[RMDB]
RNA sequence: GGGAACGACUCGAGUAGAGUCGAAAAAAUCACCAUCAACAUCAGUGGUUGCCGAGCUGCUGAUUGCGUAAAGCUCCUGGUUCUGGUCAAAAGAUAACAAAAUACCCUCUUCAAGCAAAACUCCACUGGUGCGAUCAGCAGUCAGAUCUGCCAAAGAAUUGUACAGGGGUUUCGACCCCUGUACAAUAAAAGAAACAACAACAACAAC
Reactivity to 2A3 in 0.01 (KOAc 150mM, MgCl2 10mM, bicine 150mM(pH8.5), 24C), signal-to-noise 1, nucleotides 027 to 156: a000a000u190c110a040c140c010a080u070c080a100a100c020a150u030c000a010g030u000g110g060u050u090g020c020c070g050a040g090c020u010g010c000u000g010a020u030u030g000c030g090u080a080a080a000g020c000u040c010c010u080g020g020u100u070c070u040g000g080u070c000a000a000a180a000g040a060u190a170a080c000a010a180a060a050u230a150c070c000c010u010c010u050u050c060a070a010g030c000a020a060a010a050c030u050c000c100a000c050u070g000g000u000g000c000g010a020u000c020a000g000c010a010g020u000c020a000g020a070u020c020u050g000c000c000a030a000a070g110a070